Conditions: 150 mM KOAc, 10 mM MgCl2 and 150 mM bicine (pH 8.5), 24 C. This 177-nucleotide RNA was probed chemically with DMS and 2A3. Values are in units of 0.01, from 0 to 300, in steps of 10. For 2A3, 9,344 sequencing reads were counted. It was measured as part of the RMDB library OK1LIB.
RNA sequence: GGGAACGACUCGAGUAGAGUCGAAAAGGCAGGAAUAGAAUGGGCCGAAUCUAGGGUCUCACUGCAGGCCAGAUGCUAUUUUUGUUUGGCGCACGGCCUGGUGGCUGAUGCGGCUGUGUUCUAAGAGCAAUAUUAUUUAAUUCGUUAAAUAAUAUUGAAAAGAAACAACAACAACAAC
Reactivity to DMS in 0.01 (KOAc 150mM, MgCl2 10mM, bicine 150mM(pH8.5), 24C), signal-to-noise 8, nucleotides 027 to 126: g000g010c030a060g010g010a060a070u010a020g000a040a030u000g010g000g010c010c010g000a070a040u010c050u030a070g010g010g010u020c070u030c040a060c060u020g010c060a030g010g000c000c000a070g010a130u030g010c010u010a000u010u010u020u030u030g000u020u020u010g010g000c010g010c070a150c120g000g000c000c000u000g010g020u020g000g010c040u000g000a060u000g000c040g000g010c010u000g010u020g010u000u000c010u000a060a100g000a130g010
Reactivity to 2A3 in 0.01 (KOAc 150mM, MgCl2 10mM, bicine 150mM(pH8.5), 24C), signal-to-noise 6, nucleotides 027 to 126: g060g010c030a010g030g080a070a040u040a060g030a040a020u050g010g030g000c000c010g000a010a000u010c020u060a030g050g030g070u030c050u060c070a060c030u150g030c030a000g020g000c000c010a020g030a080u030g000c010u020a090u090u070u030u080u130g250u100u090u090g030g000c010g000c020a010c050g000g000c000c000u010g010g000u030g010g000c010u030g010a060u050g010c000g000g030c020u050g060u020g010u170u000c010u030a050a030g030a010g090